[RMDB]
RNA sequence: GGGAACGACUCGAGUAGAGUCGAAAAGAAUCACCGUACCUAUUUAGGUUUACGCUCCAAGAUCGGUGGAUAGCAGCCCUAUCAAUAUGUAGGAGAACUGUGCUAUGUUUAGAAGAUUAGGUAGUCUAUUACACAGCCAUGUUCGCAUGGCUGUGAACCUUGGAGGUAUGUUCGCAUACCUCCAAGGAAAAGAAACAACAACAACAAC
Reactivity to 2A3 in 0.01 (KOAc 150mM, MgCl2 10mM, bicine 150mM(pH8.5), 24C), signal-to-noise 2, nucleotides 027 to 156: g080a010a040u040c020a000c050c000g000u010a040c020c050u120a150u110u240u220a070g030g030u010u090u040a050c030g010c040u020c080c020a070a070g050a060u070c030g000g020u020g040g030a060u080a010g000c020a000g000c000c000c000u040a040u090c040a170a160u170a070u300g040u020a000g010g010a080g000a070a030c020u030g010u010g000c000u030a010u110g110u020u060u060a050g040a150a010g010a070u180u130a070g030g030u030a020g050u030c050u000a160u150u130a070c010a000c000a000g000c000c000a010u030g050u070u010c070g000c100a000u000g000g060c010u000g000u000g000a020a000
Reactivity to DMS in 0.01 (KOAc 150mM, MgCl2 10mM, bicine 150mM(pH8.5), 24C), signal-to-noise 1, nucleotides 027 to 156: g000a120a110u000c000a090c040c020g010u010a090c020c020u010a080u020u000u010a090g040g000u000u000u000a030c090g000c030u000c020c020a060a170g000a060u000c030g000g020u040g030g010a090u010a030g000c030a090g010c060c060c010u010a230u020c040a100a110u000a140u000g060u010a030g000g000a070g030a100a080c040u020g010u010g050c020u000a090u010g000u000u000u000a120g010a160a060g000a080u010u000a070g010g000u010a100g010u000c030u000a090u000u000a140c000a010c010a070g030c000c000a000u040g010u000u000c190g070c000a040u000g020g050c000u070g000u000g000a010a040
This 207-nucleotide RNA was probed chemically with 2A3 and DMS. The 2A3 profile rests on 808 reads. The reactions ran in a buffer of 150 mM KOAc, 10 mM MgCl2 and 150 mM bicine (pH 8.5), at 24 C. 2A3 is a SHAPE reagent: it acylates the 2'-hydroxyl of flexible nucleotides of all four kinds.